[RMDB]
RNA sequence: GGGAACGACUCGAGUAGAGUCGAAAAUCAUCAAGAAGUAGGCUUAGGCCAAUUGCUUGGUGGUGAAAGUAGAGGGAAGGUAGCACUUCGACGCCUCUAAGUACGCUGUGGGAGCAGUGCUUAAAUCAAAAGCACAGCGACUUCGGUCGCUGUGCAACAAAACCGCAUCGUUCGCGAUGCGGUUUUGAAAAGAAACAACAACAACAAC
Reactivity to 2A3 in 0.01 (KOAc 150mM, MgCl2 10mM, bicine 150mM(pH8.5), 24C), signal-to-noise 1, nucleotides 027 to 156: u030c000a000u000c000a010a000g010a060a040g030u080a020g020g000c030u140u090a100g120g100c080c000a030a120u040u030g000c020u000u020g000g020u000g010g000u010g010a160a080a000g050u080a010g060a010g030g020g040a070a000g040g000u090a050g000c010a010c050u030u010c060g070a040c040g070c000c010u030c010u040a080a020g090u040a010c040g000c030u060g020u060g080g010g020a040g000c000a010g000u020g050c000u040u110a070a040a000u130c080a040a080a000a000g000c000a000c000a000g000c000g000a000c010u020u080c190g100g000u000c000g000c000u000g020u000g040c010a000a000